[RMDB]
RNA sequence: GGGAACGACUCGAGUAGAGUCGAAAACUGCAGGUCAACGGUACUUCUUCAGAUCAGCUAUUGCAGAAGAAAGGUCAGCCAAGCGCUCUGGGCCAGUGCGACUGUAUAUAGGAGCUUCUGAUUUCAACCAGAAGCUAACUCUCUCCGAAACAAUGAGGUAUAGGUACUCAUUCGUGAGUACCUAUACAAAAGAAACAACAACAACAAC
Reactivity to DMS in 0.01 (KOAc 150mM, MgCl2 10mM, bicine 150mM(pH8.5), 24C), signal-to-noise 2, nucleotides 027 to 156: c040u000g010c030a100g010g030u000c030a090a100c050g020g020u000a030c050u000u020c030u010u000c070a140g000a110u000c030a100g000c040u000a070u000u010g000c040a150g020a110a090g000a060a070a080g010g000u010c000a050g050c060c020a050a070g000c060g010c030u000c040u000g020g030g020c030c100a110g020u010g040c050g010a050c000u000g000u000a090u010a120u000a090g020g000a070g010c000u000u000c000u000g010a010u000u000u000c170a100a070c000c010a020g000a040a020g020c000u000a010a070c060u000c000u000c000u000c030c020g000a130a070a080c080a050a070u000g020a080g010
Reactivity to 2A3 in 0.01 (KOAc 150mM, MgCl2 10mM, bicine 150mM(pH8.5), 24C), signal-to-noise 5, nucleotides 027 to 156: c030u040g000c030a040g040g040u070c050a070a030c100g030g010u040a050c030u020u030c000u070u040c040a030g010a130u020c040a020g040c030u100a070u190u150g000c020a010g020a100a000g020a080a110a010g050g010u020c020a010g000c040c020a090a020g030c030g010c020u040c030u040g020g070g010c010c020a020g010u020g050c020g030a040c030u060g050u060a050u020a020u060a200g150g010a020g000c000u000u000c000u000g070a120u130u230u280c080a070a030c040c000a020g000a000a000g000c000u000a020a020c000u010c010u000c010u010c040c030g060a070a070a050c060a070a150u150g010a040g110